About this RNA: Conditions: 150 mM KOAc, 10 mM MgCl2 and 150 mM bicine (pH 8.5), 24 C. The record gives the reactivity of an RNA of 177 nucleotides to DMS and 2A3. Reactivities are given for positions 27 through 126. The data come from the RNA Mapping Database (RMDB), libraries RFM100 and RFMREP.

RNA sequence: GGGAACGACUCGAGUAGAGUCGAAAACCGGGAGAGCCAUAGUAGUCUGCGGAACCGGUGAGUACACCGGAAUUGCCAGGACGACCGGGUCCUUUCCAUUGGAUCAAACCCGCUCAAUGCCUGGAGACAAUUUGACAGGAUUCGUCCUGUCAAAUUGAAAAGAAACAACAACAACAAC
Reactivity to DMS in 0.01 (KOAc 150mM, MgCl2 10mM, bicine 150mM(pH8.5), 24C), signal-to-noise 7, nucleotides 027 to 126: c010c020g010g010g010a080g010a070g010c060c050a060u020a070g010u010a070g010u000c030u000g000c070g010g010a130a120c020c010g000g010u000g000a280g030u040a090c060a020c000c010g000g010a070a060u010u030g020c020c010a090g000g000a080c060g000a040c110c040g010g000g000u010c050c060u010u010u020c050c080a150u020u020g010g020a060u010c150a070a140a080c000c010c010g000c300u000c030a100a100u030g000c020c000u000g000g010a110g010a250
Reactivity to 2A3 in 0.01 (KOAc 150mM, MgCl2 10mM, bicine 150mM(pH8.5), 24C), signal-to-noise 8, nucleotides 027 to 126: c000c000g000g040g000a100g000a000g020c030c030a070u090a070g060u020a020g030u020c050u040g070c050g090g020a060a080c000c000g000g020u020g010a110g070u130a110c020a000c020c010g000g030a080a100u120u140g060c000c000a010g000g030a010c020g000a010c020c010g030g000g000u040c020c000u040u060u050c050c040a170u070u240g020g000a020u070c060a050a090a110c010c010c000g000c010u020c010a040a080u170g040c000c000u020g010g000a020g010a020